[RMDB]
RNA sequence: GGGAACGACUCGAGUAGAGUCGAAAAGAUGUUCGCUGAUUCGUCAGCCGCAUCCCCAGGUGGCCGCGAUCUUCAAGGCUACGGCGCGGAUAGGUCCGCGCUGAUCGUUUUCCUCCAACGACGCUAUAAAAGGAACGAAGGUUCGCCUUCGUUCCAAGUAAUGCUGGGUGUUCGCACCCAGCAUUACAAAAGAAACAACAACAACAAC
Reactivity to 2A3 in 0.01 (KOAc 150mM, MgCl2 10mM, bicine 150mM(pH8.5), 24C), signal-to-noise 2, nucleotides 027 to 156: g040a010u020g020u060u140c100g000c000u020g000a010u050u070c220g010u010c130a000g010c000c020g000c000a000u030c020c010c010c000a060g000g000u000g000g000c030c030g070c120g020a000u000c000u010u020c020a010a000g000g000c000u000a000c020g010g020c000g000c000g010g050a050u170a290g280g160u100c020c000g000c000g030c000u000g010a000u000c000g000u020u010u100u140c010c020u150c040c030a110a070c090g090a080c050g040c080u110a060u080a270a070a040a030g020g000a000a000c000g000a010a010g010g040u040u050c170g090c010c000u000u010c000g000u000u000c000c000a000a000

An RNA of 207 nucleotides, treated with 2A3 and read out base by base. Source: RMDB library M2RFPK, as collected in RNAgym. Conditions: 150 mM KOAc, 10 mM MgCl2 and 150 mM bicine (pH 8.5), 24 C. Values are in units of 0.01, from 0 to 300, in steps of 10.